[RMDB]
RNA sequence: GGGAACGACUCGAGUAGAGUCGAAAAGAAGGAGAUGAAAGCGACUUUAGAAUCGGCUAACUGAGCAGACAGAUGCAGACGGCAAGUAUCGUCGCCAGAGAUACAGUCGCAACUAGCCGAAGGAGAACGGUCCAUACGGAUUCGUCCGUAUGGACCGAAAAGAAACAACAACAACAAC
Reactivity to 2A3 in 0.01 (KOAc 150mM, MgCl2 10mM, bicine 150mM(pH8.5), 24C), signal-to-noise 2, nucleotides 027 to 126: g190a070a010g010g040a030g030a050u200g060a030a060a000g040c000g040a010c040u210u130u160a100g080a060a050u030c010g020g030c020u010a050a050c000u030g050a040g060c000a090g000a010c010a050g030a060u060g000c010a010g050a240c020g010g050c010a200a000g010u000a000u000c000g000u000c000g040c030c000a010g030a000g000a070u020a050c020a040g050u040c010g010c000a000a090c090u000a000g020c020c010g000a010a000g140g040a090g030a050a060
Reactivity to DMS in 0.01 (KOAc 150mM, MgCl2 10mM, bicine 150mM(pH8.5), 24C), signal-to-noise 1, nucleotides 027 to 126: g000a010a060g000g000a070g010a050u000g000a010a000a190g000c000g020a070c010u000u000u010a110g000a290a030u070c000g000g000c000u070a060a050c010u020g000a170g040c070a020g010a010c020a190g000a130u080g000c080a080g020a130c040g060g000c110a200a060g010u010a000u000c000g000u000c090g000c070c020a000g000a020g000a090u000a010c000a110g000u000c000g000c030a190a070c240u000a050g020c000c000g000a100a110g010g000a060g000a020a300
Chemical mapping of a 177-nucleotide RNA with 2A3 and DMS. The reactions ran in a buffer of 150 mM KOAc, 10 mM MgCl2 and 150 mM bicine (pH 8.5), at 24 C. Values cover nucleotides 27 to 126. Source: RMDB library OK1LIB, as collected in RNAgym.